This 207-nucleotide RNA was probed chemically with 2A3 and DMS. Values are in units of 0.01, from 0 to 300, in steps of 10. For 2A3, 1,432 sequencing reads were counted. The data come from the RNA Mapping Database (RMDB), library M2RFPK. The DMS profile rests on 2,449 reads. High 2A3 reactivity points to a flexible backbone, as in loops and unpaired stretches. The RNA was probed in 150 mM KOAc, 10 mM MgCl2 and 150 mM bicine (pH 8.5) at 24 C.
RNA sequence: GGGAACGACUCGAGUAGAGUCGAAAAGCCACAUAUCCCGUGACAUUGCGAAAGCAAGGCUGGCGGUAGGUAGUCCUGGGCGGCGACAGCCUUGGACUGCGGCGUAAAGGUGAACCUGGGGCCGUUAUAACGCGGUAACAGUUCGCUGUUACCGCAACGCUUUACAAGAGUUCGCUCUUGUAAAGCGAAAAGAAACAACAACAACAAC
Reactivity to 2A3 in 0.01 (KOAc 150mM, MgCl2 10mM, bicine 150mM(pH8.5), 24C), signal-to-noise 2, nucleotides 027 to 156: g050c010c000a050c030a010u170a040u090c000c010c030g040u030g010a030c060a170u040u100g010c000g030a070a030a010g000c020a040a080g040g010c050u050g070g020c030g000g060u060a050g010g070u050a020g000u000c000c010u020g000g020g020c020g020g060c110g050a010c050a050g000c010c040u010u020g000g000a020c020u010g000c000g000g000c010g050u110a000a000a090g010g010u040g050a070a050c000c020u010g010g000g030g000c000c010g020u020u000a110u040a170a050c090g000c050g030g000u000a000a000c000a000g060u130u130c200g020c120u000g000u000u000a000c000c000g030c000a000a000
Reactivity to DMS in 0.01 (KOAc 150mM, MgCl2 10mM, bicine 150mM(pH8.5), 24C), signal-to-noise 1, nucleotides 027 to 156: g010c010c020a100c010a120u000a200u000c060c000c000g020u000g010a080c090a160u000u000g000c050g000a130a070a220g040c030a010a050g030g020c040u000g000g000c050g000g020u000a060g030g000u000a030g000u000c020c000u020g000g020g020c040g040g000c070g000a130c100a160g020c000c010u020u000g000g020a030c000u000g050c000g010g000c020g090u010a060a100a060g000g030u010g000a060a140c040c030u000g010g000g000g020c020c030g030u000u000a110u020a120a130c150g000c000g040g000u000a000a060c020a020g010u000u010c230g040c000u000g000u020u000a010c010c000g000c000a010a010